Structure probing data (DMS and 2A3) for a 207-nucleotide construct. The reactions ran in a buffer of 150 mM KOAc, 10 mM MgCl2 and 150 mM bicine (pH 8.5), at 24 C. The 2A3 profile rests on 3,637 reads. Source: RMDB library ARCHII, as collected in RNAgym.
[RMDB]
RNA sequence: GGGAACGACUCGAGUAGAGUCGAAAACUACGGUGCUCAACUAGCUGCGUAAGCAGCCUAGCCGCACUUCUGGUAGCUUCGGCUCCAGCAAUCAUCAGGGGAUGUCUGUAAACCCAAAAUGAUUGUCAUAUAGAACAGAAUCGCCGUGCAGUACGCUGCAGUAUAAGAUGUUCGCAUCUUAUACUGCAAAAGAAACAACAACAACAAC
Reactivity to DMS in 0.01 (KOAc 150mM, MgCl2 10mM, bicine 150mM(pH8.5), 24C), signal-to-noise 1, nucleotides 027 to 156: c020u000a020c000g010g010u000g000c030u010c040a090a010c000u000a080g030c000u000g040c000g070u030a280a300g040c000a010g010c040c050u010a000g000c000c300g060c060a020c030u000u000c050u000g000g030u010a000g000c060u000u020c160g020g000c010u020c010c050a090g000c010a010a010u010c010a020u040c000a300g010g020g000g010a140u000g020u000c120u000g000u010a090a120a290c000c000c010a000a100a090a060u000g020a050u000u000g020u000c030a040u010a080u010a060g050a060a090c030a200g010a020a100u010c000g000c040c050g000u000g030c020a140g010u000a110c110g010c080u010
Reactivity to 2A3 in 0.01 (KOAc 150mM, MgCl2 10mM, bicine 150mM(pH8.5), 24C), signal-to-noise 4, nucleotides 027 to 156: c030u050a020c020g000g000u010g010c010u050c120a050a040c030u000a010g000c000u010g010c010g050u120a110a090g000c010a010g060c050c000u010a000g010c030c010g020c010a000c000u070u030c020u030g100g000u130a010g000c010u030u030c130g030g000c000u000c000c000a010g040c000a000a010u000c000a000u020c040a060g020g030g010g000a070u130g070u040c030u010g070u110a090a170a150c000c000c000a030a020a000a000u010g000a000u010u000g000u000c010a010u100a030u080a200g080a090a040c050a040g050a070a060u080c050g000c050c010g020u040g030c030a030g040u080a030c060g030c050u040